[RMDB]
The record gives the reactivity of an RNA of 207 nucleotides to DMS and 2A3. DMS (dimethyl sulfate) methylates the pairing face of unpaired adenines and cytosines. It was measured as part of the RMDB library M2RFPK. The 2A3 profile rests on 2,907 reads.
RNA sequence: GGGAACGACUCGAGUAGAGUCGAAAAUCCACUAUGAAACUAGUCACUAAAUAAACACAAUUAGCUACUGUGUGUAAUAGUGAGUGUUGAUAACACAAAAUAAUAGUAUAGUUUUGGAAGAUUAUACGCGCCCUUGCUCCGUUCGCGGAGCAAGGAAGUCGAGAUAUUAGUUCGCUAAUAUCUCGACAAAAGAAACAACAACAACAAC
Reactivity to DMS in 0.01 (KOAc 150mM, MgCl2 10mM, bicine 150mM(pH8.5), 24C), signal-to-noise 2, nucleotides 027 to 156: u010c030c020a150c120u010a140u020g010a180a200a120c090u010a130g080u000c030a030c010u010a000a020a090u000a150a200a020c040a050c010a030a050u000u000a190g000c190u010a050c010u000g030u000g010u000g000u010a110a250u000a060g020u010g020a050g040u000g000u000u000g010a140u040a090a130c030a080c050a070a060a070a160u000a060a300u000a090g020u000a040u000a030g010u010u000u000u010g010g010a150a160g030a040u000u000a020u000a020c020g070c080g050c100c000c000u020u000g000c000u000c000c000g030u010u030c300g030c000g090g000a050g020c000a000a010g010g000a000a060
Reactivity to 2A3 in 0.01 (KOAc 150mM, MgCl2 10mM, bicine 150mM(pH8.5), 24C), signal-to-noise 5, nucleotides 027 to 156: u010c010c020a030c060u110a110u200g090a110a050a010c030u030a030g070u030c010a000c000u030a030a030a060u070a050a100a000c030a020c020a050a130u110u070a090g070c080u190a070c050u020g010u010g010u000g010u080a020a020u000a030g000u000g020a040g010u020g000u020u060g120a220u180a250a030c050a010c010a040a130a020a060u280a080a060u070a120g010u010a020u000a030g000u010u030u140u110g090g010a130a060g010a070u040u050a030u030a040c020g040c010g050c050c000c000u000u000g000c000u000c000c000g010u020u020c080g030c000g100g000a000g000c000a000a000g000g000a000a000